[RMDB]
RNA sequence: GGGAACGACUCGAGUAGAGUCGAAAACAAGAUCGGUGGAUAGCAGCCCUAUCAAUAUCUAGGAGAACUGUGCUAUGUUUAGAAGAUUAGGUAGUCUCUAAACAGAACAAUUUACCUGAUGAACAAAAAAAUCCAAUGGCGUUCGCGCCAUUGGAAAGACAGGAACGAUGUUCGCAUCGUUCCUGUCAAAAGAAACAACAACAACAAC
Reactivity to 2A3 in 0.01 (KOAc 150mM, MgCl2 10mM, bicine 150mM(pH8.5), 24C), signal-to-noise 2, nucleotides 027 to 156: c050a030a100g010a060u100c050g020g040u070g070g020a050u020a060g050c020a020g000c020c000c000u070a100u140c060a160a090u090a030u250c070u100a000g000g030a050g000a070a110c020u040g000u050g040c030u050a020u060g040u000u000u000a050g000a270a030g010a040u010u060a060g030g100u070a040g000u000c000u000c000u000a000a000a000c010a010g020a030a010c050a080a100u010u050u060a010c010c020u030g040a080u090g060a090a010c090a100a050a030a010a000a000a010u010c000c000a000a000u000g000g020c020g000u080u060c270g000c020g000c060c010a000u000u000g000g000a000a000a000